[RMDB]
RNA sequence: GGGAACGACUCGAGUAGAGUCGAAAAACGCGGAGUACGCUCCGCGACAACACUUCUUUCGACCCGCUAAUCGAGACCUAUGGGUCGUUAAAUUACGUCUCUAUCUUACUCACAUAACAUCGCACAAAAAACGUGGUUCGGUUCGCCGAACCACGAACAAAGUUACACCGUUCGCGGUGUAACUUUGAAAAGAAACAACAACAACAAC
Reactivity to 2A3 in 0.01 (KOAc 150mM, MgCl2 10mM, bicine 150mM(pH8.5), 24C), signal-to-noise 4, nucleotides 027 to 156: a000c020g000c010g000g000a010g010u070a030c120g030c070u000c010c010g060c000g020a010c000a070a030c040a020c000u110u060c020u070u200u120c020g010a010c020c000c020g010c170u150a040a060u150c080g010a000g030a040c000c030u090a140u250g000g000g000u000c000g010u000u010a040a010a000u200u060a010c020g010u000c010u000c020u020a120u090c050u070u160a090c040u050c080a050c010a160u200a140a050c020a150u190c070g030c120a030c120a040a100a010a060a060a030c030g000u000g000g000u000u000c000g000g060u030u050c120g000c050c000g000a000a000c000c000a000c000g000a000a000
Reactivity to DMS in 0.01 (KOAc 150mM, MgCl2 10mM, bicine 150mM(pH8.5), 24C), signal-to-noise 1, nucleotides 027 to 156: a090c010g040c040g010g000a030g010u010a100c260g000c010u010c000c010g000c000g010a090c030a040a110c080a000c040u010u010c040u010u070u000c010g000a080c000c010c010g030c150u010a100a130u010c110g010a070g000a050c000c060u000a120u010g010g000g030u000c000g010u000u010a030a060a010u000u010a040c030g000u000c010u010c030u000a090u000c000u010u000a020c040u000c050a120c100a070u020a030a070c020a140u000c080g010c050a160c050a010a060a050a030a050a110c040g020u000g000g020u000u000c010g070g030u000u010c300g030c030c030g010a040a010c000c000a000c010g020a010a040

Chemical mapping of a 207-nucleotide RNA with 2A3 and DMS. DMS adducts were read by reverse transcription with MarathonRT. The DMS profile rests on 1,813 reads. Source: RMDB library M2RFPK, as collected in RNAgym. The reactions ran in a buffer of 150 mM KOAc, 10 mM MgCl2 and 150 mM bicine (pH 8.5), at 24 C. High 2A3 reactivity points to a flexible backbone, as in loops and unpaired stretches.